[RMDB]
RNA sequence: GGGAACGACUCGAGUAGAGUCGAAAAAGGGCAGGGUGAAAUUCCCGAUCGGCGGUAAAGUCCGCGAGCCGAACGAAAAAGGUUUUGCAGGAACCGGUGAGAUUCCGGUACCGACAGUAUAGUCUGGAUGACCACUUCAGCUUCGGCUGAAGUGGAACAUACACGGGUUGUUCGCAACCCGUGUAUGAAAAGAAACAACAACAACAAC
Reactivity to DMS in 0.01 (KOAc 150mM, MgCl2 10mM, bicine 150mM(pH8.5), 24C), signal-to-noise 1, nucleotides 027 to 156: a140g020g020g010c020a160g140g020g000u000g010a090a170a270u010u000c000c000c010g010a000u020c030g040g000c000g000g000u090a060a190a090g020u000c010c000g010c000g000a290g020c010c020g010a100a300c020g010a040a100a070a150a220g040g010u000u010u000u010g000c000a160g020g020a120a010c000c030g010g020u000g010a250g000a300u010u020c000c000g000g000u000a000c010c000g000a030c020a020g000u000a120u010a020g000u000c010u000g010g000a150u010g000a110c000c000a040c030u000u000c000a000g070c000u000u010c300g050g000c030u000g050a000a000g060u000g000g000a030a030